[RMDB]
RNA sequence: GGGAACGACUCGAGUAGAGUCGAAAACAGACCAAGUUCGCUUGGUCUGAAAGAAAGCGGAAAGCACCAGGGAGGGAAGGUGCGGGCCGCAACCACCGAUAAAAAGUACGAUCUUCGGAUCGUACAAGUUACUUGAUUUCUUCGGAAAUCAAGUAACAAAAGAAACAACAACAACAAC
Reactivity to DMS in 0.01 (KOAc 150mM, MgCl2 10mM, bicine 150mM(pH8.5), 24C), signal-to-noise 4, nucleotides 027 to 126: c010a010g020a010c000c000a000a000g000u000u010c220g030c010u000u000g010g000u000c000u000g000a020a090a100g000a080a150a150g000c000g010g000a050a080a250g000c010a010c000c010a110g000g020g000a080g020g000g040a170a190g000g020u000g000c000g020g000g000c000c000g020c000a050a070c100c060a140c090c080g000a090u040a050a060a040a130a130g000u000a000c000g010a000u000c000u000u020c150g030g010a000u000c000g020u000a000c010a030a050
Reactivity to 2A3 in 0.01 (KOAc 150mM, MgCl2 10mM, bicine 150mM(pH8.5), 24C), signal-to-noise 9, nucleotides 027 to 126: c010a000g000a000c000c000a000a000g010u020u070c120g010c150u000u000g010g000u000c000u000g000a000a000a000g060a020a060a010g000c000g000g010a030a040a010g010c000a000c010c010a060g060g080g070a150g030g050g020a070a090g010g000u000g000c000g000g050g010c000c000g000c010a000a000c010c020a030c010c040g080a040u190a190a140a010a010a000g000u000a000c000g000a010u000c000u020u070c200g070g000a000u000c000g000u000a000c000a000a000
Conditions: 150 mM KOAc, 10 mM MgCl2 and 150 mM bicine (pH 8.5), 24 C. Structure probing data (DMS and 2A3) for a 177-nucleotide construct.